The record gives the reactivity of an RNA of 177 nucleotides to DMS and 2A3. For DMS, 3,072 sequencing reads were counted. 2A3 adducts were read by reverse transcription with SuperScript II with manganese. Values cover nucleotides 27 to 126. DMS adducts were read by reverse transcription with MarathonRT.
RNA sequence: GGGAACGACUCGAGUAGAGUCGAAAACAACCAAUGGAAAAAGCACCAUUCGGAAUUGUUGGUAGUGAAACAGCAUUCCCAUUAUUAUAUACGCAUUUUGUAAAAAAUGGUGAUUGGACAUUACAACAUAGGAUAGCUGAUUCGUCAGCUAUCCUAUAAAAGAAACAACAACAACAAC
Reactivity to DMS in 0.01 (KOAc 150mM, MgCl2 10mM, bicine 150mM(pH8.5), 24C), signal-to-noise 4, nucleotides 027 to 126: c090a100a170c080c020a020a020u000g000g010a100a150a100a090a140g000c100a060c010c000a020u000u000c150g030g010a060a050u010u000g000u000u000g010g010u010a070g020u010g010a110a100a090c040a050g000c050a040u010u000c010c000c010a060u010u010a060u000u000a070u010a190u030a080c190g030c120a060u000u000u000u000g000u010a000a020a070a040a010a010u000g010g010u000g010a060u000u010g010g010a260c040a020u000u000a060c110a060a080c160
Reactivity to 2A3 in 0.01 (KOAc 150mM, MgCl2 10mM, bicine 150mM(pH8.5), 24C), signal-to-noise 3, nucleotides 027 to 126: c030a000a030c020c020a010a030u020g000g030a220a090a040a010a000g110c030a030c010c000a010u020u030c080g010g060a070a110u080u080g010u020u030g050g030u080a160g050u040g230a210a060a060c020a000g000c000a010u000u000c000c000c000a010u030u020a020u050u040a050u020a020u020a040c020g020c030a010u000u060u110u140g030u080a060a120a050a040a010a000u020g010g010u000g030a050u000u050g010g010a000c020a020u020u060a040c050a230a000c010